[RMDB]
Structure probing data (2A3 and DMS) for a 177-nucleotide construct.
The 2A3 profile rests on 1,229 reads.
Reactivities are given for positions 27 through 126.
For DMS, 1,038 sequencing reads were counted.
RNA sequence: GGGAACGACUCGAGUAGAGUCGAAAAGCACCCGCCCCUUAUGGCUUCGGCCUCAAAUUCGAGGAAACAGGCGGAAAACGGCUCACCGGCCAUGGCGGCGCACUGCGCGGCUGGCGCUGCCAGCGGACCGUGGAGGUAAUUUCGAUUACCUCCACGGAAAAGAAACAACAACAACAAC
Reactivity to 2A3 in 0.01 (KOAc 150mM, MgCl2 10mM, bicine 150mM(pH8.5), 24C), signal-to-noise 1, nucleotides 027 to 126: g050c020a080c000c010c000g000c020c010c000c000u040u130a140u140g060g000c010u030u090c180g110g000c000c000u040c020a130a150a110u210u190c110g020a020g000g020a020a110a040c050a070g040g000c040g010g020a050a060a000a040c050g020g000c040u020c020a040c010c000g030g000c010c020a050u030g010g010c040g010g020c000g020c050a200c110u070g030c300g030c080g210g020c030u050g000g050c040g000c030u030g000c000c000a010g020c060g040g020a000
Reactivity to DMS in 0.01 (KOAc 150mM, MgCl2 10mM, bicine 150mM(pH8.5), 24C), signal-to-noise 1, nucleotides 027 to 126: g010c140a150c160c010c010g000c000c010c030c060u000u010a120u000g030g020c000u000u020c200g010g000c000c050u020c100a070a080a190u000u000c160g020a020g000g030a070a070a080c210a090g010g000c030g000g030a050a050a050a150c220g000g000c020u000c040a140c030c000g000g000c000c010a120u000g000g000c010g020g020c000g000c050a060c060u000g010c030g000c150g000g000c010u000g020g000c000g020c080u000g000c000c000a030g010c090g010g000a210